The record gives the reactivity of an RNA of 177 nucleotides to DMS and 2A3. For 2A3, 5,359 sequencing reads were counted. Conditions: 150 mM KOAc, 10 mM MgCl2 and 150 mM bicine (pH 8.5), 24 C. DMS (dimethyl sulfate) methylates the pairing face of unpaired adenines and cytosines.
RNA sequence: GGGAACGACUCGAGUAGAGUCGAAAAAGGUUUGCAACUCUGUUAAGGAUACUCUGGCUUAUUAUGCUCACAGCGUGUUGUACAGAGUUUUUCCUUAUGACAUGGAUUCUGGUGUGUCAUCCUUUAGGAUACUCUUAAGGUUCGCCUUAAGAGUAUCAAAAGAAACAACAACAACAAC
Reactivity to DMS in 0.01 (KOAc 150mM, MgCl2 10mM, bicine 150mM(pH8.5), 24C), signal-to-noise 8, nucleotides 027 to 126: a040g000g010u010u000u000g010c100a060a050c040u000c040u010g010u000u000a050a050g010g010a030u000a020c000u000c010u000g000g000c040u000u010a080u010u010a050u010g010c020u010c240a240c170a080g010c050g020u000g010u000u000g010u000a060c010a020g000a020g010u000u000u010u000u000c000c000u000u000a030u000g000a040c040a040u010g010g010a120u010u010c120u000g010g010u010g010u000g000u000c020a060u000c070c010u000u000u000a120g010
Reactivity to 2A3 in 0.01 (KOAc 150mM, MgCl2 10mM, bicine 150mM(pH8.5), 24C), signal-to-noise 4, nucleotides 027 to 126: a010g040g000u050u040u050g040c020a010a040c010u000c010u070g050u090u070a030a000g050g000a010u000a010c000u000c010u000g010g000c010u070u080a060u230u070a040u300g030c030u050c070a130c030a040g020c010g010u020g030u050u050g040u070a140c000a010g000a000g000u000u000u000u040u010c000c000u020u010a050u040g020a010c020a030u070g070g020a120u220u070c080u180g110g020u080g010u000g010u070c010a040u040c010c000u050u090u060a100g070